[RMDB]
An RNA of 177 nucleotides, treated with DMS and 2A3 and read out base by base. For 2A3 the reverse transcriptase was SuperScript II with manganese. Reactivities are given for positions 27 through 126. For DMS the reverse transcriptase was MarathonRT. It was measured as part of the RMDB library OK2TST. The 2A3 profile rests on 747 reads.
RNA sequence: GGGAACGACUCGAGUAGAGUCGAAAAAAAUAUGAAGUACAUUCACAUUGUAAGGCCUUUUGUAACAGCAGGACUACGAUGUUUUAGCACCCAUCAGGUUGGGGAGCCCAAUUGCUGCUUUGACACACUUCUUAGGGGUAUUCGUACCCCUAAGAAGAAAAGAAACAACAACAACAAC
Reactivity to DMS in 0.01 (KOAc 150mM, MgCl2 10mM, bicine 150mM(pH8.5), 24C), signal-to-noise 4, nucleotides 027 to 126: a060a040a050u010a080u010g010a050a060g010u010a090c110a100u000u000c080a080c000a010u010u020g010u000a080a060g000g000c010c020u000u000u020u010g010u000a070a090c140a090g000c150a030g010g000a030c020u000a020c030g010a050u010g000u010u010u000u010a150g010c080a140c010c010c010a040u010c090a130g000g000u010u000g000g010g000g000a060g000c020c050c050a050a070u000u000g010c040u000g000c060u000u000u010g010a100c140a090c300a100
Reactivity to 2A3 in 0.01 (KOAc 150mM, MgCl2 10mM, bicine 150mM(pH8.5), 24C), signal-to-noise 1, nucleotides 027 to 126: a000a000a070u290a040u100g010a070a020g070u170a060c040a140u000u160c060a010c000a090u030u060g060u060a060a200g080g000c010c050u090u050u050u000g120u090a100a050c010a050g160c040a030g030g020a020c020u020a000c030g010a010u010g070u060u090u060u050a020g000c000a040c020c010c000a030u040c050a030g220g060u080u160g060g020g000g020a050g030c030c000c030a010a050u090u020g070c070u010g020c020u070u000u000g040a040c040a010c020a030